RNA sequence: GGGAACGACUCGAGUAGAGUCGAAAAGUAAUCGUCAGAAGUUUACUAGGCAUUGCUGUACCAACUCAAAUAGCAACACAUGAUUCUGAUUUUGCUAAAAAUGAAGAUGGUUCAUAUUACUUAAAUGUCACCUACUGGGAUUCGUCCCAGUAGGUGAAAAAGAAACAACAACAACAAC
Reactivity to 2A3 in 0.01 (KOAc 150mM, MgCl2 10mM, bicine 150mM(pH8.5), 24C), signal-to-noise 5, nucleotides 027 to 126: g000u000a020a030u050c030g060u020c020a050g070a220a030g170u120u210u060a090c050u130a110g070g000c000a020u040u060g070c060u020g050u060a050c000c000a050a080c030u010c040a050a050a100u010a050g000c000a000a000c010a000c010a150u190g040a220u300u050c020u020g220a280u130u080u010u020g000c010u050a040a070a060a060a060u090g000a030a030g130a090u080g000g000u070u090c040a030u070a100u220u150a040c010u060u130a040a090a100u170g030
Reactivity to DMS in 0.01 (KOAc 150mM, MgCl2 10mM, bicine 150mM(pH8.5), 24C), signal-to-noise 3, nucleotides 027 to 126: g020u020a010a000u030c090g000u000c050a120g000a160a160g040u020u020u000a060c010u010a120g000g060c020a060u020u010g040c040u000g000u030a070c040c010a020a140c080u000c080a010a050a180u030a030g000c070a000a030c300a090c040a060u030g030a130u030u010c170u050g000a230u040u020u000u000g010c030u000a030a010a060a090a080u010g000a050a000g040a120u000g000g000u000u010c050a050u000a100u020u010a180c050u000u060a030a080a030u030g030
The data come from the RNA Mapping Database (RMDB), library OK1LIB. This 177-nucleotide RNA was probed chemically with 2A3 and DMS. For 2A3, 2,285 sequencing reads were counted. The RNA was probed in 150 mM KOAc, 10 mM MgCl2 and 150 mM bicine (pH 8.5) at 24 C.